The record gives the reactivity of an RNA of 177 nucleotides to 2A3 and DMS.
DMS adducts were read by reverse transcription with MarathonRT.
Conditions: 150 mM KOAc, 10 mM MgCl2 and 150 mM bicine (pH 8.5), 24 C.
[RMDB]
RNA sequence: GGGAACGACUCGAGUAGAGUCGAAAAGAAUGGGCUUAUCGUUUCCGCGUGACGGCCCGGAGACUUUGCUGGCUAAAAUAAUUUUGUCUCGACUACCGCGGGCUUUUAUCCAGCUACCAAUGUAUUGCCUAUGACGUGUGUUCGCACACGUCAUAGGAAAAGAAACAACAACAACAAC
Reactivity to 2A3 in 0.01 (KOAc 150mM, MgCl2 10mM, bicine 150mM(pH8.5), 24C), signal-to-noise 2, nucleotides 027 to 126: g050a090a060u140g010g020g000c020u070u060a030u080c000g070u000u280u080c070c080g040c000g080u010g060a020c050g030g000c000c000c000g000g000a040g020a020c000u060u050u060g000c020u010g020g000c020u040a030a010a050a070u210a090a210u010u240u270u120g050u020c070u010c040g080a080c110u300a130c040c130g000c020g010g010g050c000u050u020u020u000a020u040c000c000a000g070c040u020a030c000c020a000a070u140g110u150a240u080u300g070
Reactivity to DMS in 0.01 (KOAc 150mM, MgCl2 10mM, bicine 150mM(pH8.5), 24C), signal-to-noise 2, nucleotides 027 to 126: g010a300a100u000g030g000g010c010u000u000a130u000c000g010u000u000u010c170c220g000c070g030u000g020a120c300g010g000c020c030c000g020g000a080g010a230c050u020u020u000g000c010u000g000g030c180u000a030a000a060a100u020a080a130u000u000u020u010g000u020c020u000c000g000a060c090u000a070c220c130g000c040g000g010g010c060u000u020u010u000a030u000c010c050a020g000c030u020a130c030c000a060a050u010g000u010a120u010u000g000